[RMDB]
RNA sequence: GGGAACGACUCGAGUAGAGUCGAAAAGUCUUCCUAGAACAUUAGCCGUAGUGGAAUUAACAGGAAAUCAUGAGGGUGACGUAGAAUUGAGUCUUCCAGGGGACUCUAUCAGAACUGGACCAUUUCCCCUGCAACGUAAAUUCGUUUACGUUGCAGGAAAAGAAACAACAACAACAAC
Reactivity to 2A3 in 0.01 (KOAc 150mM, MgCl2 10mM, bicine 150mM(pH8.5), 24C), signal-to-noise 2, nucleotides 027 to 126: g000u000c030u040u020c020c000u040a100g050a110a030c040a100u090u090a050g060c020c030g040u070a010g070u070g100g050a100a110u070u050a140a080c020a040g140g040a030a040a050u110c060a060u120g010a020g090g010g030u020g050a010c030g030u050a050g070a150a090u070u110g010a000g010u000c020u070u020c030c040a030g000g000g010g000a000c010u000c030u040a090u090c020a030g050a090a020c030u040g000g040a020c010c020a020u050u070u030c010c010
Reactivity to DMS in 0.01 (KOAc 150mM, MgCl2 10mM, bicine 150mM(pH8.5), 24C), signal-to-noise 2, nucleotides 027 to 126: g010u010c100u010u000c010c000u000a110g010a130a080c070a070u000u000a060g030c030c050g010u000a120g020u010g000g010a090a070u000u010a080a120c120a050g000g000a080a100a090u010c060a060u010g010a130g000g000g030u000g020a090c110g000u020a060g010a070a080u010u000g020a050g000u000c020u000u010c060c050a050g000g010g000g000a030c050u000c010u000a040u010c100a070g000a110a100c050u000g000g030a100c080c060a080u000u000u000c040c050